[RMDB]
RNA sequence: GGGAACGACUCGAGUAGAGUCGAAAACUUCAGACAUCAACAAGGCACUGUAUCACAUCAUGCAAGCCAAGUACGGCAACAACACAAAGAUCAUCGGCGAGGUUUACUCCAAGUUCUUCAGCCCUGAAAAGGAAGAUGCCGCAGCUUAUAGCUACAACAUACGCUAAUGGUUCGCCAUUAGCGUAUGAAAAGAAACAACAACAACAAC
Reactivity to 2A3 in 0.01 (KOAc 150mM, MgCl2 10mM, bicine 150mM(pH8.5), 24C), signal-to-noise 5, nucleotides 027 to 156: c020u070u040c030a040g040a090c010a090u060c010a020a090c030a130a100g020g010c030a010c140u040g020u060a070u060c060a030c010a160u090c010a010u100g060c040a120a010g020c030c010a030a030g100u050a030c030g020g050c030a050a030c020a050a050c020a080c010a130a100a040g080a090u100c010a030u080c030g040g000c050g020a020g030g010u060u150u140a040c020u000c060c010a050a030g040u030u020c010u100u070c020a030g020c000c000c020u010g030a070a070a000a000g060g030a030a040g010a020u060g020c010c020g050c030a010g000c020u080u160a090u110a150g010c010u100a050c030a090a010
Reactivity to DMS in 0.01 (KOAc 150mM, MgCl2 10mM, bicine 150mM(pH8.5), 24C), signal-to-noise 2, nucleotides 027 to 156: c070u040u010c000a090g010a250c010a080u000c040a090a130c070a110a120g010g050c000a060c070u000g000u000a080u000c030a110c060a130u000c060a110u010g040c060a060a130g020c020c070a040a080g030u000a100c040g000g040c060a030a100c030a090a030c040a130c050a000a090a050g000a050u010c070a100u010c070g040g030c020g030a120g040g020u000u000u000a060c030u000c010c020a010a120g040u000u000c000u000u000c050a140g000c050c000c000u000g020a090a010a160a050g040g040a060a150g010a110u000g000c030c030g020c030a040g060c010u000u000a080u000a110g020c030u000a000c030a060a190